[RMDB]
RNA sequence: GGGAACGACUCGAGUAGAGUCGAAAAGAAGACGUUCAAACACGCUCAUCUUCCCAUCCCAAUUCCACUGUUCUUCGGAAUAGUGGCCCUCUGCCGCGCCCCGUCCGAACGCCGCGGUGGCCGCCCACUCGUGCAGGAAACUCACGAUGCUGGUAAACCUAGAAGGUACGUUCGCGUACCUUCUAGGAAAAGAAACAACAACAACAAC
Reactivity to 2A3 in 0.01 (KOAc 150mM, MgCl2 10mM, bicine 150mM(pH8.5), 24C), signal-to-noise 1, nucleotides 027 to 156: g050a000a000g030a010c050g030u030u260c200a110a190a060c060a050c080g000c050u100c020a090u020c020u030u000c010c000c070a060u020c000c000c020a000a160u220u090c000c000a030c000u000g040u040u000c000u010u110c220g170g000a000a000u000a010g010u000g020g040c000c000c000u000c040u080g040c010c010g070c020g000c030c080c000c000g060u060c030c040g020a210a080c010g050c050c000g000c010g000g010u070g000g000c030c040g020c000c000c000a030c010u010c000g020u020g000c040a000g060g050a080a120a070c040u020c000a010c010g030a020u050g010c100u000g000g020u010a080a030a060
Chemical mapping of a 207-nucleotide RNA with 2A3.
The data come from the RNA Mapping Database (RMDB), library ARCHII.
The reactions ran in a buffer of 150 mM KOAc, 10 mM MgCl2 and 150 mM bicine (pH 8.5), at 24 C.
Reactivities are given for positions 27 through 156.